[RMDB]
This 170-nucleotide RNA was probed chemically with 2A3 and DMS. The reactions ran in a buffer of 150 mM KOAc, 10 mM MgCl2 and 150 mM bicine (pH 8.5), at 24 C.
RNA sequence: GGGAACGACUCGAGUAGAGUCGAAAACCCUCCCGGGUGUUUCCUCUUCCUAGGUCCGGAGUCGACCUCCAUCUGAUCCGUCCUGGCUCUCUUCGCCGGGGGAGCUCCCUCCCCGUCCUUGUCUUUUGCCCGAAACUGUUCGCAGUUUCGAAAAGAAACAACAACAACAAC
Reactivity to 2A3 in 0.01 (KOAc 150mM, MgCl2 10mM, bicine 150mM(pH8.5), 24C), signal-to-noise 9, nucleotides 027 to 129: c000c000c000u040c010c000c000g040g010g020u070g020u020u050u020c010c010u030c020u050u030c010c020u050a050g020g030u020c050c040g050g020a030g030u040c040g050a100c010c010u010c010c010a100u050c060u090g040a080u030c020c010g050u050c020c030u010g020g000c000u010c000u000c020u130u100c050g040c050c010g010g000g000g000g000a020g020c020u070c010c000c000u020c010c000c000c000g030u040c020c000u050u070g050u040c010u020u070u040u070g050c020c020
Reactivity to DMS in 0.01 (KOAc 150mM, MgCl2 10mM, bicine 150mM(pH8.5), 24C), signal-to-noise 9, nucleotides 027 to 129: c020c010c010u010c000c020c010g020g010g010u030g000u020u020u020c010c020u020c040u000u010c010c020u000a050g020g000u020c040c060g050g000a090g010u040c050g010a100c040c010u000c020c020a100u020c050u020g000a090u030c040c070g000u010c000c020u010g030g000c000u020c030u000c050u030u020c100g030c080c040g020g010g020g010g010a050g000c040u020c040c030c010u020c000c000c000c000g010u000c040c060u010u060g020u020c010u000u010u020u020g010c150c050
For 2A3 the reverse transcriptase was SuperScript II with manganese.
The DMS profile rests on 156,049 reads.